[RMDB]
RNA sequence: GGGAACGACUCGAGUAGAGUCGAAAAGUGCCGAUUGAAAUUCAUGGGAGCCUCUCCAUAAUGGAUGAACGCCGCGUUAGUUCGCGCAGUCGCGACGUAAACGCUCUGUUUUCCCGUUCAGGCCUCACAUACGACGAUAUUUCGAUAUCGUCGUAUGAAAAGAAACAACAACAACAAC
Reactivity to 2A3 in 0.01 (KOAc 150mM, MgCl2 10mM, bicine 150mM(pH8.5), 24C), signal-to-noise 6, nucleotides 027 to 126: g080u060g050c020c000g080a100u080u180g070a120a130a100u120u080c050a050u070g010g030g010a050g050c030c030u150c030u000c020c000a050u170a250a070u200g020g000a010u050g040a050a020c020g050c070c020g010c030g020u020u040a070g030u150u070c010g000c010g000c070a020g180u270c040g000c000g010a010c010g030u060a050a080a070c010g000c000u000c020u050g080u020u030u040u010c020c000c000g010u050u030c040a040g020g060c000c020u050c010a040
Reactivity to DMS in 0.01 (KOAc 150mM, MgCl2 10mM, bicine 150mM(pH8.5), 24C), signal-to-noise 5, nucleotides 027 to 126: g010u010g010c030c010g000a140u010u010g000a100a110a090u000u000c060a060u000g010g010g000a080g010c120c070u000c050u000c010c020a100u010a110a070u010g010g010a060u010g000a080a050c050g020c090c080g020c010g010u000u000a180g010u000u000c110g020c090g020c210a140g010u010c030g010c010g000a030c050g010u000a060a070a060c080g010c020u000c080u010g010u000u000u000u000c010c010c020g010u000u010c110a100g000g000c030c070u000c120a180
The record gives the reactivity of an RNA of 177 nucleotides to 2A3 and DMS. For 2A3 the reverse transcriptase was SuperScript II with manganese. For DMS the reverse transcriptase was MarathonRT. The RNA was probed in 150 mM KOAc, 10 mM MgCl2 and 150 mM bicine (pH 8.5) at 24 C. Values are in units of 0.01, from 0 to 300, in steps of 10.